Chemical mapping of a 207-nucleotide RNA with 2A3.
2A3 adducts were read by reverse transcription with SuperScript II with manganese.
For 2A3, 1,467 sequencing reads were counted.
The RNA was probed in 150 mM KOAc, 10 mM MgCl2 and 150 mM bicine (pH 8.5) at 24 C.
RNA sequence: GGGAACGACUCGAGUAGAGUCGAAAAGAAACAAAGAAAGUUCAUUGUUUAUCGGAAACUUUAAACUAUAACCAUUCAAACUUUUCCAGAAGUUAGUUUGAAUAGAAAUUAAAAAGAAACUUCUGAAUAACCUUAUCAUGCUUCGGCAUGAUAAGAACACUCUGGAUUAGUUCGCUAAUCCAGAGUGAAAAGAAACAACAACAACAAC
Reactivity to 2A3 in 0.01 (KOAc 150mM, MgCl2 10mM, bicine 150mM(pH8.5), 24C), signal-to-noise 1, nucleotides 027 to 156: g030a000a050a010c020a010a070a000g150a060a160a080g110u060u040c030a030u060u190g060u060u110u100a100u130c050g000g110a110a050a040c020u000u090u060a040a060a000c020u050a040u080a300a050c000c020a000u000u000c000a000a000a020c000u010u050u010u040c120c000a000g030a030a000g000u000u000a000g000u000u010u040g040a040a030u080a230g000a000a070a000u250u210a000a070a050a000a000g030a010a000a000c000u000u010c000u000g010a000a020u040a050a000c000c000u010u000a000u000c000a000u010g000c010u020u040c110g110g000c010a000u000g000a000u000a010a000g000a010a000